[RMDB]
RNA sequence: GGGAACGACUCGAGUAGAGUCGAAAAGGUGGAAACAACUGAAGCUUCAACGCCUUUUUUUCCUAUCUUCUUUAGCACCGGGCUAGGGAGUAAGCCCGUGGAACCUUAGUUUUGUUCCCUCGGGACUUACUUGUGGUUCCUGUGGUGCACUCCUGACGGCUAUUUGUAGGUUCGCCUACAAAUAGCCAAAAGAAACAACAACAACAAC
Reactivity to 2A3 in 0.01 (KOAc 150mM, MgCl2 10mM, bicine 150mM(pH8.5), 24C), signal-to-noise 2, nucleotides 027 to 156: g030g000u020g020g090a020a120a080c050a030a100c120u150g130a240a040g030c090u130u100c120a170a040c040g010c010c000u000u000u000u020u010u010u000c030c000u030a130u090c080u170u050c020u100u190u030a070g000c060a020c060c150g000g070g000c040u020a020g000g090g060a000g000u010a060a000g000c020c000c010g000u010g000g010a000a000c000c010u050u000a040g040u080u130u150u290g030u030u010c010c020c020u080c110g000g000g070a120c010u000u000a000c000u050u080g080u050g100g000u140u110c020c050u060g130u230g070g020u050g000c060a040c010u030c040c020u020g040a070c130
Conditions: 150 mM KOAc, 10 mM MgCl2 and 150 mM bicine (pH 8.5), 24 C. Chemical mapping of a 207-nucleotide RNA with 2A3. The data come from the RNA Mapping Database (RMDB), library VIROID.